[RMDB]
RNA sequence: GGGAACGACUCGAGUAGAGUCGAAAACGAAGGAGCAGGAUCAAUGAUGGCAGUUUAUUACCUAACAGUUAAACCCUGCCUUAAUUACUACAACUCAGGUGUCUCAGCAAAUGAUGCAACCGGUCAAUAAAGCGACAAGGUUCGCCUUGUCGCUUUAAAAAGAAACAACAACAACAAC
Reactivity to DMS in 0.01 (KOAc 150mM, MgCl2 10mM, bicine 150mM(pH8.5), 24C), signal-to-noise 1, nucleotides 027 to 126: c100g000a110a050g020g000a090g010c000a070g010g000a070u000c100a010a050u010g020a040u000g000g000c080a010g040u000u020u030a100u040u000a020c040c070u000a110a100c210a050g010u010u000a040a070a140c200c120c050u000g000c040c000u000u000a210a040u000u000a050c010u000a000c110a010a060c030u000c040a110g040g000u000g000u000c020u010c000a070g010c080a040a000a120u010g000a050u030g010c000a080a070c160c040g000g000u000c160a040a100

Source information: This 177-nucleotide RNA was probed chemically with DMS. Reactivities are given for positions 27 through 126. Source: RMDB library OK2TST, as collected in RNAgym.